This 207-nucleotide RNA was probed chemically with DMS and 2A3.
The data come from the RNA Mapping Database (RMDB), library M2RFPK.
The reactions ran in a buffer of 150 mM KOAc, 10 mM MgCl2 and 150 mM bicine (pH 8.5), at 24 C.
[RMDB]
RNA sequence: GGGAACGACUCGAGUAGAGUCGAAAACCGGAAUGGUUCCGCCGUGAUCGGGCCAUGCAAUAGUUGCCAACGACAACUAUGCUCCGGUUGAUCAGGCAGCGUAACGCUGCUUGAAAGACCACAUGAAUUAGCGCGACAUUGUUCGCAAUGUCGCGAACUACAUAUGCGAGUUCGCUCGCAUAUGUAGAAAAGAAACAACAACAACAAC
Reactivity to DMS in 0.01 (KOAc 150mM, MgCl2 10mM, bicine 150mM(pH8.5), 24C), signal-to-noise 3, nucleotides 027 to 156: c000c000g020g010a150a040u000g010g020u000u010c000c010g040c070c100g030u020g050a090u000c020g030g040g020c000c000a070u010g010c070a100a070u000a010g010u000u000g000c020c010a140a210c230g000a120c000a010a040c010u010a010u000g000c040u000c040c000g020g010u000u000g000a300u010c000a030g010g010c010a000g010c000g020u010a090a110c180g010c010u000g010c000u020u000g010a010a040a250g000a070c010c010a100c080a170u000g000a130a180u000u000a110g010c000g000c000g000a030c010a040u030u020g010u000u000c270g010c020a010a010u000g000u000c000g020c000g000a000a110
Reactivity to 2A3 in 0.01 (KOAc 150mM, MgCl2 10mM, bicine 150mM(pH8.5), 24C), signal-to-noise 7, nucleotides 027 to 156: c010c000g000g020a080a080u120g010g010u250u230c020c030g040c030c080g160u200g050a170u100c030g000g000g000c000c020a010u030g000c020a040a300u000a010g000u000u000g020c040c110a180a060c190g110a140c020a000a010c020u000a010u010g020c020u000c030c020g000g000u000u010g010a030u000c000a000g000g000c000a010g010c010g080u170a090a080c300g000c000u000g000c000u000u000g000a000a000a000g030a000c040c020a060c040a160u240g130a140a100u200u110a140g060c000g000c000g000a000c000a000u000u010g010u030u060c180g000c120a000a010u000g000u000c000g000c000g000a000a010